[RMDB]
RNA sequence: GGGAACGACUCGAGUAGAGUCGAAAAAACACUGUGUAGGAUAGGUGGGAGGCUUUGAAGUGUGGACGCCAGUCUGCAUGGAGCCGACCUUGAAAUACCACCCUUUAAUGUAGAAAAACAAAGCCAAGAAUUGCUAAUCUUUCGAGAUUAGCAAUUCAAAAGAAACAACAACAACAAC
Reactivity to DMS in 0.01 (KOAc 150mM, MgCl2 10mM, bicine 150mM(pH8.5), 24C), signal-to-noise 3, nucleotides 027 to 126: a050a040c060a050c040u000g000u010g020u000a030g010g010a040u010a020g010g020u000g000g010g000a100g020g020c010u000u000u020g000a140a130g000u000g010u000g020g020a010c000g020c090c220a080g000u000c000u000g000c000a000u000g000g010a020g010c010c000g020a090c300c040u000u000g000a020a050a040u000a090c010c010a010c000c000c010u000u010u000a060a060u010g000u000a090g000a050a050a060a120a020c080a040a100a110g000c070c060a090a130
Reactivity to 2A3 in 0.01 (KOAc 150mM, MgCl2 10mM, bicine 150mM(pH8.5), 24C), signal-to-noise 1, nucleotides 027 to 126: a000a000c090a000c000u070g000u020g010u020a000g040g060a030u010a010g000g020u010g000g000g070a210g000g000c010u300u210u030g030a030a010g000u000g000u010g030g010a000c010g050c030c010a010g000u010c000u030g000c000a000u010g010g010a000g030c000c000g000a010c020c000u010u000g000a000a020a000u000a010c000c000a020c000c010c000u020u070u090a160a090u150g070u060a070g200a170a140a020a030a020c050a080a020a000g020c020c020a090a040